[RMDB]
RNA sequence: GGGAACGACUCGAGUAGAGUCGAAAAACUCUGAGCGUAAUCGCGUCUUGACUAGACUAUAGGUGACGUGAGUAUCUAUCCCAUUGUCCAUAGCGAUGGGAUAAUACGCUGAUCUAUAGUCACGGAAAGUCGGAGCUUGAUUCGUCAAGCUCCGACUAAAAGAAACAACAACAACAAC
Reactivity to DMS in 0.01 (KOAc 150mM, MgCl2 10mM, bicine 150mM(pH8.5), 24C), signal-to-noise 1, nucleotides 027 to 126: a060c070u000c030u000g000a040g010c010g010u000a080a100u000c020g070c050g010u000c020u010u000g000a200c110u000a090g010a000c000u000a000u000a010g020g020u010g000a090c170g010u010g000a060g010u000a000u000c250u000a000u000c010c000c000a000u010u000g030u000c040c300a080u020a180g000c020g020a020u000g000g000g000a000u000a000a020u000a020c000g000c000u000g000a010u000c010u000a000u000a000g000u000c030a090c240g020g010a030a040
Reactivity to 2A3 in 0.01 (KOAc 150mM, MgCl2 10mM, bicine 150mM(pH8.5), 24C), signal-to-noise 1, nucleotides 027 to 126: a000c050u010c050u140g090a020g000c000g040u100a100a010u060c010g010c000g100u010c040u050u110g110a040c020u130a060g000a000c000u000a000u000a010g010g090u090g080a010c010g020u000g020a030g060u000a000u010c070u010a020u010c000c000c000a000u000u020g040u080c150c060a130u290a080g000c000g020a000u000g000g010g000a000u020a000a000u000a000c010g000c020u020g000a010u040c000u010a030u010a000g010u050c000a030c030g050g060a200a070
Chemical mapping of a 177-nucleotide RNA with DMS and 2A3. Conditions: 150 mM KOAc, 10 mM MgCl2 and 150 mM bicine (pH 8.5), 24 C. The data come from the RNA Mapping Database (RMDB), library M2PK90. For 2A3 the reverse transcriptase was SuperScript II with manganese. For DMS, 855 sequencing reads were counted.